[RMDB]
RNA sequence: GGGAACGACUCGAGUAGAGUCGAAAAUUGAAAGGGGCUAAGUUUUUGGCAGAGAAGUAUUCCCCUGAAUAUGCAUUUGCCAUAGACUCUUUUGCAUGUUGCUCUGAGCUGACUGGAGACGUUAGACGCAUUCCACCCUUUUCGAAGGGUGGAAUGCAAAAGAAACAACAACAACAAC
Reactivity to DMS in 0.01 (KOAc 150mM, MgCl2 10mM, bicine 150mM(pH8.5), 24C), signal-to-noise 1, nucleotides 027 to 126: u000u000g070a100a140a090g000g030g000g010c150u000a050a060g000u000u000u000u000u000g010g010c020a010g010a060g000a120a240g020u000a050u000u000c000c130c200c150u020g010a000a030u000a000u000g000c270a230u000u000u000g020c010c010a010u000a060g010a030c020u000c040u000u000u000u000g020c080a030u000g000u000u010g010c050u000c040u010g010a110g010c070u000g000a060c040u000g050g000a110g000a140c140g010u000u000a050g010a100c200